[RMDB]
RNA sequence: GGGAACGACUCGAGUAGAGUCGAAAAGAGCAUACUUCAGAUGUAUGCCAUAUCCAUAUAGGCGUUCUGAACUAAAGUAUAUGGAUAUGAGGUUCGUUCUUUAGUUCAGUGAACGAUUUGAAGUAUAGAUAGUUUACACAUUCGUGUGUGAGCUAUCAAAAGAAACAACAACAACAAC
Reactivity to 2A3 in 0.01 (KOAc 150mM, MgCl2 10mM, bicine 150mM(pH8.5), 24C), signal-to-noise 7, nucleotides 027 to 126: g060a020g010c030a000u000a010c010u090u120c060a030g020a090u070g030u040a010u020g030c010c000a000u020a030u000c020c000a010u070a010u020a050g090g010c030g000u040u010c020u010g010a010a000c000u020a020a010a010g070u030a090u020a010u090g020g000a000u010a040u090g050a050g080g060u010u010c000g000u010u000c000u000u020u010a000g000u000u010c010a000g000u010g060a030a000c010g010a000u020u020u110g040a040a010g030u030a030u020a070
Reactivity to DMS in 0.01 (KOAc 150mM, MgCl2 10mM, bicine 150mM(pH8.5), 24C), signal-to-noise 9, nucleotides 027 to 126: g000a160g020c080a020u000a000c000u000u020c170a090g020a100u020g000u010a030u000g010c010c000a060u020a040u010c060c060a080u020a070u010a060g010g010c050g010u010u010c010u000g000a010a010c010u000a020a030a050g010u020a020u030a020u010g000g000a000u000a070u030g010a140g020g020u010u000c020g010u010u000c000u000u000u010a010g000u000u000c010a020g000u000g000a030a030c050g010a060u010u010u000g010a040a080g010u020a060u020a130